[RMDB]
RNA sequence: GGGAACGACUCGAGUAGAGUCGAAAAGAAGGCAAGAGGUGAGCCCUCUUAUCACGCCUGCUUAAGGGCCGCUUGAGGGGUCCUUGGUCAAGUGGCAAUGCCAGUGCCUGGGAAGGCACCCAUUACUUAGCAGAACGUGAAAGGGAGUCUCCCUUUCCUAUCAAGGUUCUUUCGAGAACCUUGAUAGAAAAGAAACAACAACAACAAC
Reactivity to DMS in 0.01 (KOAc 150mM, MgCl2 10mM, bicine 150mM(pH8.5), 24C), signal-to-noise 2, nucleotides 027 to 156: g000a130a020g000g000c010a100a100g010a090g000g010u000g010a080g000c050c010c010u010c020u000u010a100u000c030a040c030g010c030c000u000g000c020u030u000a010a060g140g030g100c030c040g000c060u000u000g030a110g010g060g110g020u000c040c050u000u000g020g040u000c020a060a070g000u000g020g030c000a200a090u010g020c110c060a090g000u000g030c000c000u030g040g030g000a250a040g020g020c010a040c000c020c030a060u000u010a110c040u000u010a050g020c020a060g000a100a070c020g020u000g000a020a070a070g020g010g000a050g000u000c010u010c000c000c010u000u000u010c010
Reactivity to 2A3 in 0.01 (KOAc 150mM, MgCl2 10mM, bicine 150mM(pH8.5), 24C), signal-to-noise 4, nucleotides 027 to 156: g070a040a020g070g020c070a050a040g020a020g070g040u140g070a020g000c000c090c010u000c010u020u180a300u080c000a000c000g010c000c020u000g010c000u060u150a010a020g070g040g000c010c010g020c040u030u060g010a040g040g050g020g050u090c010c040u050u120g060g040u050c030a010a010g000u010g020g000c010a030a050u040g000c040c050a010g000u010g010c000c010u060g050g070g030a060a080g040g000c000a000c000c010c000a030u060u110a090c020u020u030a000g000c010a010g010a090a030c000g000u010g000a010a010a010g020g010g010a070g040u010c010u020c010c000c000u000u020u030c000
Chemical mapping of a 207-nucleotide RNA with DMS and 2A3. It was measured as part of the RMDB library OK3TST. The reactions ran in a buffer of 150 mM KOAc, 10 mM MgCl2 and 150 mM bicine (pH 8.5), at 24 C.